RNA sequence: GGGAACGACUCGAGUAGAGUCGAAAAUAUAGACUCAGCAGGUUGCUGUCAAUCUGACUGCUCCAUGGGAUGGUUUGGUUGAAGAGGCGGCUAUUUGUCGGUGAUGGAGUUCUUAGAUCUUGGAACGAUAGACCCAAGUGUUCGCACUUGGGUCUAUAAAAGAAACAACAACAACAAC
Reactivity to DMS in 0.01 (KOAc 150mM, MgCl2 10mM, bicine 150mM(pH8.5), 24C), signal-to-noise 1, nucleotides 027 to 126: u010a140u020a060g020a030c090u000c010a080g010c010a070g000g010u000u000g020c090u000g000u030c030a050a060u000c040u010g010a040c050u000g020c250u000c010c060a160u020g020g000g030a160u000g000g010u000u000u000g030g000u000u000g000a040a060g000a260g000g010c100g010g020c030u000a030u000u000u010g000u000c060g010g000u020g000a110u000g000g010a160g000u000u000c050u020u000a090g000a090u000c030u010u020g000g010a030a060c110g010

This 177-nucleotide RNA was probed chemically with DMS. The DMS profile rests on 942 reads. The reactions ran in a buffer of 150 mM KOAc, 10 mM MgCl2 and 150 mM bicine (pH 8.5), at 24 C.